[RMDB]
RNA sequence: GGGAACGACUCGAGUAGAGUCGAAAACACACAAGUAAAAGUACAAGCUACAGACUACCUCAACACAGCCUGGAUACUAGUUGUCUUCUUCGGACCUUCAUUCGUGUUCAUCUUUCUACCUUGGUUGUGCUUGUGUACUUUUACCAACUACAUCACACAAAUCCGAGAGAUUCGUCUCUCGGAUUUGAAAAGAAACAACAACAACAAC
Reactivity to DMS in 0.01 (KOAc 150mM, MgCl2 10mM, bicine 150mM(pH8.5), 24C), signal-to-noise 3, nucleotides 027 to 156: c070a090c080a120c100a120a110g020u000a010a040a030a060g010u010a050c050a060a090g020c030u020a300c050a070g000a180c060u010a060c060c050u000c040a070a050c050a080c090a030g040c010c030u000g020g010a110u000a030c040u010a060g020u020u000g000u000c030u000u000c050u010u000c050g010g010a050c060c050u020u000c060a120u000u000c050g040u010g030u010u000c040a060u010c020u000u000u000c050u010a060c010c020u000u000g020g030u000u000g030u010g010c030u000u020g040u000g010u000a020c010u000u000u000u000a040c000c030a060a080c060u010a080c030a070u010c070a110c080a160
Reactivity to 2A3 in 0.01 (KOAc 150mM, MgCl2 10mM, bicine 150mM(pH8.5), 24C), signal-to-noise 5, nucleotides 027 to 156: c130a000c000a010c010a060a090g010u000a010a010a000a000g000u010a000c000a030a030g040c040u080a070c060a090g060a050c050u100a070c040c050u090c040a040a040c030a010c010a030g020c000c010u030g000g020a030u070a140c030u020a100g060u060u060g030u030c050u120u040c010u090u120c080g040g000a040c020c030u060u060c090a110u060u090c060g010u010g040u130u050c010a060u000c050u030u150u030c050u060a110c030c010u050u060g020g000u000u010g010u010g030c080u040u040g010u000g010u040a000c000u000u000u000u000a000c010c000a040a000c020u200a030c030a130u160c040a040c000a010
The record gives the reactivity of an RNA of 207 nucleotides to DMS and 2A3. DMS adducts were read by reverse transcription with MarathonRT. It was measured as part of the RMDB library OK3TST. The reactions ran in a buffer of 150 mM KOAc, 10 mM MgCl2 and 150 mM bicine (pH 8.5), at 24 C.